[RMDB]
RNA sequence: GGGAACGACUCGAGUAGAGUCGAAAAGAUAUGGACAUAGAACUACGAUUCACUCAGCAACAGCUCGGAAACGAGACAUGCUGUUGAAUCGCUAUGUCCUAAGUCAAAACGAUCCUUCGGGAUCGAAGAAAUUACCCACGUUCGCGUGGGUAAUUUCAAAAGAAACAACAACAACAAC
Reactivity to DMS in 0.01 (KOAc 150mM, MgCl2 10mM, bicine 150mM(pH8.5), 24C), signal-to-noise 1, nucleotides 027 to 126: g010a080u000a300u020g000g050a000c000a010u000a000g010a160a000c120u000a300c120g000a010u000u000c000a020c140u000c000a020g010c030a000a130c130a160g000c000u000c010g000g000a040a130a130c000g000a000g000a000c040a290u000g000c000u010g000u010u020g000a000a000u000c000g000c020u000a000u000g020u000c000c000u010a000a020g000u000c120a040a040a080a200c040g000a000u000c030c000u000u100c230g000g010g000a000u000c000g000a070a090